The record gives the reactivity of an RNA of 207 nucleotides to 2A3. The 2A3 profile rests on 793 reads.

RNA sequence: GGGAACGACUCGAGUAGAGUCGAAAAACAUAUUACGAUAUGAUUCAGAUGGUGUCUUACUGGUUCGUACCAAGGGACAUAAUGGUUUCUUGUUUCUAACCAAAGAACAAGUGGCGAGCCUGAAUAAAAAACUGACUGCCGUUCGCGGCAGUCAGAAGCUACUCGUAGUGUUCGCACUACGAGUAGCAAAAGAAACAACAACAACAAC
Reactivity to 2A3 in 0.01 (KOAc 150mM, MgCl2 10mM, bicine 150mM(pH8.5), 24C), signal-to-noise 2, nucleotides 027 to 156: a000c010a020u160a060u180u150a020c090g080a020u020a060u190g030a080u090u070c090a080g060a100u120g070g030u020g050u040c010u020u100a120c050u050g000g020u010u050c060g040u080a030c020c020a030a010g040g010g010a010c010a010u170a070a040u100g070g000u030u010u020c010u010u010g020u020u070u000c010u000a020a060c000c030a300a010a050g010a080a030c010a080a000g010u000g060g000c000g020a000g030c000c030u010g080a110a050u170a080a080a000a000a010a030c010u010g000a000c000u000g050c010c010g030u030u050c190g010c020g070g040c000a000g000u000c000a000g000a000a000